[RMDB]
RNA sequence: GGGAACGACUCGAGUAGAGUCGAAAAGCAGGAGUGUUCGCACUCCUGCAAAUGAAAGCGGCCAGCUCCAGGCCGCCAAACAAUAUGGAGCACUAAGUAAAGAAAGGCCUACGUUCGCGUAGGCCAAGCAAUAUUUUAUCUUCGGAUAAAAUAUUGCAAAAGAAACAACAACAACAAC
Reactivity to DMS in 0.01 (KOAc 150mM, MgCl2 10mM, bicine 150mM(pH8.5), 24C), signal-to-noise 2, nucleotides 027 to 126: g010c010a000g000g020a030g020u010g000u010u020c220g010c000a000c000u000c000c000u000g000c000a010a010a080u020g000a070a180a110g010c010g000g010c010c000a120g010c010u000c000c000a010g000g010c000c000g020c000c110a050a050a050c070a010a020u000a050u000g000g000a020g000c020a140c080u020a040a130g020u010a060a070a120g020a110a080a120g020g010c010c000u010a010c010g020u000u010c200g040c030g010u000a000g000g000c000c000a000a020
Reactivity to 2A3 in 0.01 (KOAc 150mM, MgCl2 10mM, bicine 150mM(pH8.5), 24C), signal-to-noise 2, nucleotides 027 to 126: g010c010a000g010g010a010g000u020g040u050u160c180g030c070a000c000u000c010c000u000g000c000a010a000a000u080g000a020a040a030g010c000g000g000c010c000a060g010c000u010c010c000a000g000g000c020c010g000c000c010a050a110a000c060a030a000u020a040u050g010g010a010g060c010a000c000u040a030a070g180u060a040a110a150g110a110a120a020g010g000c000c010u000a000c000g020u030u060c220g030c000g100u020a000g030g000c000c000a000a000